This 177-nucleotide RNA was probed chemically with 2A3. For 2A3, 496 sequencing reads were counted.
[RMDB]
RNA sequence: GGGAACGACUCGAGUAGAGUCGAAAAAGGAAUCGAGGCUGAUCAUACUUGAGCAAGCGCAUUCGGAAGAGAGUGUUAUAUGGACGAGGAAGGGUCUUUCGGGCGGCAAUGGAUGGCAUCGAUUGAGGAGCCCAUCAGCUUUCGAGCUGAUGGGCUCAAAAGAAACAACAACAACAAC
Reactivity to 2A3 in 0.01 (KOAc 150mM, MgCl2 10mM, bicine 150mM(pH8.5), 24C), signal-to-noise 1, nucleotides 027 to 126: a000g030g000a000a050u060c030g060a050g020g070c110u040g040a000u050c030a010u030a140c000u060u040g010a010g120c000a190a000g110c010g000c040a020u160u280c140g000g060a110a000g040a000g040a040g070u110g080u150u090a110u000a020u250g040g030a000c020g000a010g010g020a000a110g080g020g030u030c000u040u010u040c000g000g020g000c000g020g000c040a000a040u100g080g000a000u040g190g000c070a030u000c020g080a050u030u000g040a170g000